[RMDB]
Structure probing data (DMS and 2A3) for a 177-nucleotide construct.
RNA sequence: GGGAACGACUCGAGUAGAGUCGAAAAGAUAUGGACUACCCACCUUUAGAGCCGAAGAACUUACUCGGAAACGAGUAAGGGAGGCUCCUAAAGAGGUCCUAAGUCAAAACCCCUGUUCGCAGGGGAACAUAACACAGUCGUUCGCGACUGUGUUAUGAAAAGAAACAACAACAACAAC
Reactivity to DMS in 0.01 (KOAc 150mM, MgCl2 10mM, bicine 150mM(pH8.5), 24C), signal-to-noise 3, nucleotides 027 to 126: g020a070u020a230u000g010g010a020c000u000a160c010c010c000a300c150c010u000u000u000a020g000a020g010c010c000g000a120a190g010a180a180c020u000u000a000c000u010c000g000g000a130a050a140c000g000a030g010u000a000a000g000g000g020a060g020g010c000u000c190c070u000a000a000a010g000a190g000g000u010c000c000u010a090a120g010u020c080a120a070a100a180c000c000c000c000u000g000u000u000c210g010c000a020g000g010g010g010a020a040
Reactivity to 2A3 in 0.01 (KOAc 150mM, MgCl2 10mM, bicine 150mM(pH8.5), 24C), signal-to-noise 2, nucleotides 027 to 126: g060a010u100a080u220g000g000a010c010u190a180c030c040c000a050c020c020u010u010u010a010g000a000g000c000c050g200a300a060g000a040a030c010u010u000a000c000u000c000g060g000a070a040a020c020g000a000g000u000a000a000g000g000g000a000g000g020c000u050c000c010u030a010a000a000g060a010g000g000u000c000c000u070a300a070g120u080c040a030a020a150a300c010c000c030c020u000g050u020u060c270g000c080a010g060g000g000g000a000a000
Values cover nucleotides 27 to 126. The RNA was probed in 150 mM KOAc, 10 mM MgCl2 and 150 mM bicine (pH 8.5) at 24 C.